[RMDB]
RNA sequence: GGGAACGACUCGAGUAGAGUCGAAAAUUUAAAACUUUUCUGGAUAACUGGGCUACAUCUUCCUGCUGUUCAAUUCCAAUACAUUUACAUCCGAAUACUUCAUUGAACAUGAUUAAAGUUAAAGGCAGUCUAAAACUUGGUUCGCCAAGUUUUAGACAAAAGAAACAACAACAACAAC
Reactivity to DMS in 0.01 (KOAc 150mM, MgCl2 10mM, bicine 150mM(pH8.5), 24C), signal-to-noise 1, nucleotides 027 to 126: u040u010u000a000a070a110a050c120u010u000u000u020c000u000g010g010a210u060a120a080c070u010g000g020g010c010u000a050c090a050u000c000u030u030c050c010u000g000c000u000g020u000u050c040a030a070u030u000c000c090a050a110u030a060c170a030u000u000u000a070c030a050u030c090c000g030a110a060u000a030c060u020u020c010a000u000u040g000a050a190c080a040u010g030a090u010u030a060a130a100g000u000u000a050a070a140g000g030c160a110
Reactivity to 2A3 in 0.01 (KOAc 150mM, MgCl2 10mM, bicine 150mM(pH8.5), 24C), signal-to-noise 4, nucleotides 027 to 126: u060u050u040a030a030a010a000c050u090u030u120u020c040u060g090g000a110u070a260a140c050u060g000g040g000c020u030a020c000a080u000c010u030u010c020c010u010g000c010u030g020u010u040c040a080a200u100u060c030c000a040a050u100a160c030a070u070u100u040a040c030a050u030c000c040g050a150a000u050a060c050u080u070c020a080u030u090g100a170a050c030a050u120g000a040u090u070a220a020a000g060u010u080a020a000a000g070g020c030a080